[RMDB]
RNA sequence: GGGAACGACUCGAGUAGAGUCGAAAAGGGGUCCCAAGCAACAGCGAGUCCGAUGUACUUGGAUUUACACUGAAGCCUCCACGGUGUUGUCAGUAUAAGGACUCGACAUGCUUGGGACGGAGGCACCCAAAUCGCUGUGAGUUCGCUCACAGCGAAACCUCGUAAAUUGGUUCGCCAAUUUACGAGGAAAAGAAACAACAACAACAAC
Reactivity to DMS in 0.01 (KOAc 150mM, MgCl2 10mM, bicine 150mM(pH8.5), 24C), signal-to-noise 1, nucleotides 027 to 156: g000g030g070g000u000c030c020c010a000a050g020c000a020a070c190a120g040c010g000a010g020u000c020c020g050a230u000g030u000a040c050u020u000g010g010a180u000u010u010a030c000a090c000u010g030a140a120g050c000c000u000c000c010a300c020g020g040u000g000u010u010g000u000c010a120g000u000a050u000a130a300g040g010a020c000u000c000g060a030c080a300u000g000c010u000u030g000g000g010a010c000g000g000a000g070g130c040a150c000c000c000a120a090a120u000c000g040c000u010g020u000g000a050g070u000u000c300g010c000u010c000a010c010a010g000c000g060a000a020a110
Reactivity to 2A3 in 0.01 (KOAc 150mM, MgCl2 10mM, bicine 150mM(pH8.5), 24C), signal-to-noise 4, nucleotides 027 to 156: g080g010g050g000u010c000c000c000a000a010g010c000a000a140c040a100g220c050g000a000g020u000c010c000g080a110u300g040u090a060c050u110u180g080g000a050u210u240u240a010c000a000c010u030g020a110a020g030c010c010u020c000c010a020c010g000g000u000g010u010u030g000u040c050a040g030u030a100u020a190a060g000g000a000c000u000c000g000a010c000a020u020g000c000u000u000g000g000g000a000c020g000g000a010g000g000c000a030c010c000c000a050a090a050u030c000g000c000u000g010u010g000a010g040u060u150c260g040c140u000c000a010c000a000g000c000g000a000a000a000